RNA sequence: GGGAACGACUCGAGUAGAGUCGAAAAGACAAUCCAGGGAACCGGAUGUCAUCACGUUGUUGCAGUACCAGAUGGCAUCUUAAAUCCGAUCUGCAAAUAAGCAUGUAGAAAGCUGAUGUGGGCUAUAAAAACGUGGUGCUGUUCGCAGCACCACGAAGAUGUAUCCACUGUUCGCAGUGGAUACAUCAAAAGAAACAACAACAACAAC
Reactivity to DMS in 0.01 (KOAc 150mM, MgCl2 10mM, bicine 150mM(pH8.5), 24C), signal-to-noise 2, nucleotides 027 to 156: g030a110c040a110a060u000c030c040a160g030g010g010a160a240c110c040g000g000a060u000g010u000c000a070u010c010a200c150g010u010u010g000u010u000g030c110a060g010u010a070c030c050a170g000a050u020g000g010c000a050u010c000u000u000a030a110a130u010c010c000g040a090u000c010u000g000c040a040a040a140u000a100a200g010c070a140u010g030u010a060g010a070a040a130g020c090u000g010a180u030g060u000g030g010g020c050u040a100u010a060a080a020a060a200c060g090u000g000g050u000g020c010u000g080u000u000c280g030c040a040g030c000a010c010c010a060c010g020a010a070
Reactivity to 2A3 in 0.01 (KOAc 150mM, MgCl2 10mM, bicine 150mM(pH8.5), 24C), signal-to-noise 2, nucleotides 027 to 156: g040a010c040a060a050u070c040c060a090g080g000g000a020a070c080c050g020g010a010u000g020u000c010a010u030c000a010c180g060u090u090g010u040u020g040c060a030g040u180a050c000c040a110g000a010u010g000g010c010a000u010c000u010u040a020a080a000u000c010c010g010a030u020c000u030g000c000a020a020a120u140a090a160g060c020a060u070g000u060a020g100a120a270a010g010c050u040g020a030u030g060u090g020g050g000c060u080a030u180a230a070a010a020a020c010g000u000g010g000u000g000c000u010g020u040u050c170g010c070a010g000c000a010c000c000a000c000g000a000a000